Structure probing data (2A3 and DMS) for a 177-nucleotide construct. The reactions ran in a buffer of 150 mM KOAc, 10 mM MgCl2 and 150 mM bicine (pH 8.5), at 24 C. 2A3 adducts were read by reverse transcription with SuperScript II with manganese. The DMS profile rests on 551 reads.
RNA sequence: GGGAACGACUCGAGUAGAGUCGAAAAGAGCGUCGAAGUGAAGUGGAUCACUAAACUGCGUCUACAUUAGUAGUUAAUGAUUACGCAGCCACAAGUGAACGACGAUCGACCAAACACUAGAUCGCGAGGGAAUGCAAUGGUUCGCCAUUGCAUUCCCAAAAGAAACAACAACAACAAC
Reactivity to 2A3 in 0.01 (KOAc 150mM, MgCl2 10mM, bicine 150mM(pH8.5), 24C), signal-to-noise 1, nucleotides 027 to 126: g110a000g000c030g010u000c000g000a100a040g010u000g180a100a030g000u000g030g090a080u020c040a040c110u150a190a060a000c010u000g010c000g020u040c060u130a200c000a060u000u110a000g210u020a000g110u230u000a000a000u010g070a120u080u000a000c000g000c000a010g000c000c020a020c000a060a000g060u010g060a080a120c080g060a020c020g050a140u110c000g000a000c020c000a240a110a000c060a010c070u040a060g000a160u150c050g000c000g100a030
Reactivity to DMS in 0.01 (KOAc 150mM, MgCl2 10mM, bicine 150mM(pH8.5), 24C), signal-to-noise 1, nucleotides 027 to 126: g000a130g000c000g010u000c010g000a110a150g010u000g000a170a210g040u000g010g010a140u000c040a010c020u000a090a170a180c000u020g010c110g020u000c130u000a040c000a000u000u000a000g000u040a060g000u000u000a000a000u000g010a300u000u000a040c000g080c000a010g020c030c130a040c290a230a140g000u000g040a000a220c000g020a040c030g000a030u000c070g020a120c000c000a090a000a120c130a080c060u000a190g000a030u000c010g000c020g010a170